[RMDB]
RNA sequence: GGGAACGACUCGAGUAGAGUCGAAAAGCACUGGAACAACACAGAUGAGAUAUUCUACACAUUAAUCUACUUAUCUGGAAUCACUUUGCCUCUAAAGGCCAGAGAAAAAUCACAGCUUCCUUGUCGGGACAUUUUGAUACUUCGGUAUCAAAAUGUCAAAAGAAACAACAACAACAAC
Reactivity to DMS in 0.01 (KOAc 150mM, MgCl2 10mM, bicine 150mM(pH8.5), 24C), signal-to-noise 1, nucleotides 027 to 126: g000c090a060c090u030g010g030a080a030c090a010a080c070a070c040a040g000a030u010g000a060g000a130u000a030u000u000c070u000a110c100a080c130a100u010u010a090a090u010c070u000a090c030u020u000a030u000c030u020g010g000a160a130u000c080a090c040u000u030u010g030c080c100u000c090u010a070a030a090g010g020c110c040a010g000a030g000a030a020a060a090a120u020c090a040c050a010g000c070u000u000c010c020u000u000g020u010c030g000g000
Reactivity to 2A3 in 0.01 (KOAc 150mM, MgCl2 10mM, bicine 150mM(pH8.5), 24C), signal-to-noise 2, nucleotides 027 to 126: g010c010a010c080u060g040g000a090a060c040a040a000c030a030c000a110g030a030u050g030a030g010a010u110a050u200u000c040u150a100c080a040c020a120u140u220a060a090u030c050u070a120c020u150u000a000u030c010u030g000g060a020a080u090c010a010c050u060u040u060g010c000c000u080c040u110a220a160a000g030g010c040c000a000g040a010g010a040a100a000a000a000u090c060a040c010a140g050c020u040u000c000c000u030u020g130u050c040g030g080
This 177-nucleotide RNA was probed chemically with DMS and 2A3. Conditions: 150 mM KOAc, 10 mM MgCl2 and 150 mM bicine (pH 8.5), 24 C. DMS (dimethyl sulfate) methylates the pairing face of unpaired adenines and cytosines. The 2A3 profile rests on 1,025 reads. For DMS, 619 sequencing reads were counted.